[RMDB]
RNA sequence: GGGAACGACUCGAGUAGAGUCGAAAACGCCGAGUAGGGUUUUCUCCCAAGAAGGUGAAGAGAAGGCAAGAAUCGGACGACUUCCCCAUGACGCUGGAGACGUCCUGGAAGGGGAAAGAGAUAGGUGGAUGACUAAUACGUUCGCGUAUUAGUCAUCAAAAGAAACAACAACAACAAC
Reactivity to 2A3 in 0.01 (KOAc 150mM, MgCl2 10mM, bicine 150mM(pH8.5), 24C), signal-to-noise 1, nucleotides 027 to 126: c030g080c000c010g000a050g050u160a090g110g000g020u020u000u010u070c030u010c010c000c020a000a090g130a040a020g000g050u140g030a110a030g020a010g010a060a010g020g050c000a030a000g030a120a070u050c020g000g010a050c010g060a030c030u030u040c010c010c000c000a090u120g030a000c010g050c050u070g010g000a070g010a060c020g010u020c000c060u060g040g070a120a090g070g000g000g020a030a040a000g110a010g020a020u060a070g090g050u080g070
Reactivity to DMS in 0.01 (KOAc 150mM, MgCl2 10mM, bicine 150mM(pH8.5), 24C), signal-to-noise 1, nucleotides 027 to 126: c120g000c030c040g000a070g020u000a210g020g010g000u000u000u000u000c070u000c000c020c010a190a080g010a080a080g000g010u000g020a120a120g030a030g010a030a030g020g000c040a030a040g000a100a100u020c040g020g060a130c060g010a140c120u000u000c000c010c020c050a070u020g010a060c120g010c050u020g000g020a030g020a160c070g000u010c030c090u030g000g010a040a020g020g010g000g000a050a040a050g000a100g000a060u010a030g000g020u000g010

Description: An RNA of 177 nucleotides, treated with 2A3 and DMS and read out base by base. Conditions: 150 mM KOAc, 10 mM MgCl2 and 150 mM bicine (pH 8.5), 24 C. For 2A3, 1,346 sequencing reads were counted. DMS adducts were read by reverse transcription with MarathonRT.